[RMDB]
RNA sequence: GGGAACGACUCGAGUAGAGUCGAAAAGAUAUGGAUCUCCAUAGGGAGAUUGCAUUCGGAAACGAAUGGCAAUCUUUGAUCUAUGAGAUCCUAAGUCAAAAGCAUUUGGGACUUCGGUCCCAAAUGCGAAGCCUCAAUUCUUCGGAAUUGAGGCUUCAAAAGAAACAACAACAACAAC
Reactivity to DMS in 0.01 (KOAc 150mM, MgCl2 10mM, bicine 150mM(pH8.5), 24C), signal-to-noise 1, nucleotides 027 to 126: g000a010u010a130u010g000g000a010u000c000u020c210c250a010u010a030g000g020g000a010g030a010u000u010g020c000a030u000u010c010g000g000a030a030a050c000g010a010a000u000g020g010c010a010a000u000c010u000u000u000g000a040u010c010u020a020u010g010a030g000a010u000c000c000u000a020a090g010u000c000a100a140a180a220g000c000a010u000u010u000g020g000g020a040c000u010u020c300g050g010u000c000c010c000a000a000a000u000g000c020
Chemical mapping of a 177-nucleotide RNA with DMS.
Reactivities are rounded to 0.1 and cut off at 0 and 3.
Reactivities are given for positions 27 through 126.
The reactions ran in a buffer of 150 mM KOAc, 10 mM MgCl2 and 150 mM bicine (pH 8.5), at 24 C.
DMS adducts were read by reverse transcription with MarathonRT.
The data come from the RNA Mapping Database (RMDB), library TTRDES.
The DMS profile rests on 1,781 reads.